Structure probing data (2A3) for a 207-nucleotide construct. For 2A3, 294 sequencing reads were counted. It was measured as part of the RMDB library OK3TST. Reactivities are given for positions 27 through 156.

RNA sequence: GGGAACGACUCGAGUAGAGUCGAAAACUAAUGACUAAUGAUGUUGAGCAUCUUUUCAAGUGCUUAUUGGCCAUUUAUACGUGAUCUUUGGUGAAAUGUCUCUUCAGUUCUUAUGCCUUAAUUUAUUUUAUUUUUUGAGACAGAGUCUCACUCUAUCUCCACCAGUGAGAUUCGUCUCACUGGUGGAAAAAGAAACAACAACAACAAC
Reactivity to 2A3 in 0.01 (KOAc 150mM, MgCl2 10mM, bicine 150mM(pH8.5), 24C), signal-to-noise 1, nucleotides 027 to 156: c070u120a130a070u030g070a010c030u110a210a030u130g130a010u060g010u100u020g010a000g050c010a070u010c000u060u090u060u140c010a070a020g090u000g070c020u000u130a030u080u010g040g000c020c040a070u060u210u140a190u110a050c160g030u040g010a050u000c020u110u090u160g070g000u050g080a000a140a030u040g070u000c000u000c050u170u020c050a000g020u070u050c010u050u130a110u040g030c000c000u050u000a050a130u170u130u120a160u080u010u120u030a150u070u160u130u030u100u070g000a000g000a000c030a000g080a000g050u010c000u000c030a010c000u070c010u030a080u050c030